[RMDB]
RNA sequence: GGGAACGACUCGAGUAGAGUCGAAAACACAGUCAGCGCUGCCAGCGUCAGCGGAUGAGUCACCCCUCCAUGUCAGCCCUGUGUCUGUGGAGCUGACGAAUGCGUUCAAGACUUGAAUUUCAAGAUCGAGCAUCCUUGUGUUCGCACAAGGAUGCUCAAAAGAAACAACAACAACAAC
Reactivity to 2A3 in 0.01 (KOAc 150mM, MgCl2 10mM, bicine 150mM(pH8.5), 24C), signal-to-noise 1, nucleotides 027 to 126: c000a000c010a040g140u040c040a030g010c010g000c030u070g000c040c030a160g090c000g140u150c000a000g030c000g060g070a230u080g000a010g130u190c010a300c010c030c000c000u000c020c030a050u120g010u050c000a000g000c050c000c000u050g070u080g060u180c060u040g040u060g110g010a150g000c000u000g000a000c000g000a010a000u050g000c040g030u060u130c020a080a030g030a090c020u000u060g140a140a280u260u210u060c020a020a000g000a050u110c080
Reactivity to DMS in 0.01 (KOAc 150mM, MgCl2 10mM, bicine 150mM(pH8.5), 24C), signal-to-noise 1, nucleotides 027 to 126: c100a040c110a120g020u000c060a090g000c020g030c000u020g010c100c100a210g020c110g000u000c090a040g010c040g000g010a220u030g000a100g000u050c060a260c020c010c000c040u010c020c040a080u010g010u000c030a010g000c000c000c000u000g000u010g010u000c060u010g040u000g000g000a080g000c000u030g000a020c010g000a050a080u010g010c010g010u020u000c160a080a100g000a070c040u010u010g010a060a150u010u000u000c040a090a080g000a140u060c090